[RMDB]
RNA sequence: GGGAACGACUCGAGUAGAGUCGAAAAUUGACUCCAGUCUGGCUCUGUGCGGCGACAUCUGAGGUGUAGUAUAGGUGGAAGCGCAAGCGCAAAUGAAAUACCACCACUCGGAACGUUGCUUCACUUAUCGAAUGAAGAGACCAAUGGGUUUAGCGUAGGAUUAACAACGGUUCGCCGUUGUUAAUCCAAAAGAAACAACAACAACAAC
Reactivity to 2A3 in 0.01 (KOAc 150mM, MgCl2 10mM, bicine 150mM(pH8.5), 24C), signal-to-noise 2, nucleotides 027 to 156: u040u030g050a010c000u060c020c000a010g090u000c080u050g060g050c010u060c040u090g010u030g010c030g050g000c000g010a000c000a020u010c020u020g010a020g110g010u140g060u260a200g080u040a050u090a200g000g000u000g010g020a140a060g000c030g000c170a180a030g070c000g000c010a040a120a020u140g120a000a000a040u090a050c000c000a000c000c000a020c000u000c000g010g000a120a050c110g000u010u000g000c000u020u000c000a010c000u130u130a080u100c040g040a080a050u140g100a170a010g010a000g010a080c000c050a020a020u040g030g000g000u070u050u030a110g030c140g030u080a000
Chemical mapping of a 207-nucleotide RNA with 2A3. High 2A3 reactivity points to a flexible backbone, as in loops and unpaired stretches. Source: RMDB library PDB130, as collected in RNAgym. Conditions: 150 mM KOAc, 10 mM MgCl2 and 150 mM bicine (pH 8.5), 24 C. The 2A3 profile rests on 750 reads.